[RMDB]
Conditions: 150 mM KOAc, 10 mM MgCl2 and 150 mM bicine (pH 8.5), 24 C. Structure probing data (DMS) for a 177-nucleotide construct. Source: RMDB library TTRDES, as collected in RNAgym.

RNA sequence: GGGAACGACUCGAGUAGAGUCGAAAAAAAGAUAUGGAAGUAUCUACCCACCGUACCCUCAACGAAGAACACGACUCGGAAACGAGUCGUGGGAGUUGAGCGGUACGAGGAUACUUCCUAAGUCAAACAAGAGUCUACAGUUCGCUGUAGACUCUUGAAAAGAAACAACAACAACAAC
Reactivity to DMS in 0.01 (KOAc 150mM, MgCl2 10mM, bicine 150mM(pH8.5), 24C), signal-to-noise 1, nucleotides 027 to 126: a100a060a080g000a090u020a130u000g040g000a020a010g020u000a000u000c010u000a120c080c050c060a300c090c040g000u000a000c000c000c000u000c010a000a000c000g000a170a130g000a090a200c020a000c000g010a000c000u000c000g000g010a050a010a070c000g020a020g000u000c000g030u000g000g000g000a000g000u000u000g000a020g000c120g040g000u000a000c000g020a110g020g000a010u000a010c000u010u000c000c000u000a010a050g000u000c040a120a090a220